Structure probing data (2A3 and DMS) for a 177-nucleotide construct. It was measured as part of the RMDB libraries RFM100 and RFMREP. DMS adducts were read by reverse transcription with MarathonRT. For 2A3, 2,661 sequencing reads were counted. Conditions: 150 mM KOAc, 10 mM MgCl2 and 150 mM bicine (pH 8.5), 24 C.

RNA sequence: GGGAACGACUCGAGUAGAGUCGAAAACUCCGCCGCCCAUAUAUCCCGCUAUGUAUAUCCUGUGUGCGCUCUAGUUCCGUUGGGACCCUGAAGAGUAAGCACACUAAACCAUGCAUUAUACAUGACCUAGAGUAUCGGGAUUCGUCCCGAUACUCUAAAAAGAAACAACAACAACAAC
Reactivity to 2A3 in 0.01 (KOAc 150mM, MgCl2 10mM, bicine 150mM(pH8.5), 24C), signal-to-noise 4, nucleotides 027 to 126: c010u030c010c000g060c020c020g010c010c010c010a050u050a000u000a060u150c000c010c010g000c030u020a020u050g090u010a030u010a040u130c030c080u040g000u000g000u000g000c020g000c000u000c000u000a030g000u030u020c020c030g150u270u240g060g000g000a020c050c020c060u140g120a120a030g000a010g010u010a160a000g020c000a000c000a000c000u030a060a050a000c030c050a000u060g070c040a040u130u060a040u120a090c040a060u050g070a080c000c020
Reactivity to DMS in 0.01 (KOAc 150mM, MgCl2 10mM, bicine 150mM(pH8.5), 24C), signal-to-noise 2, nucleotides 027 to 126: c100u020c050c070g000c050c040g060c030c000c020a090u000a150u010a070u000c030c000c000g040c080u060a010u010g010u020a030u030a050u040c020c120u000g010u000g060u030g000c010g000c010u000c000u000a150g000u000u000c010c020g000u040u020g000g020g010a010c030c300c170u000g050a180a050g000a000g040u000a040a080g050c010a010c010a020c010u010a050a080a050c150c100a020u010g010c090a100u000u000a050u020a070c010a010u010g000a140c060c090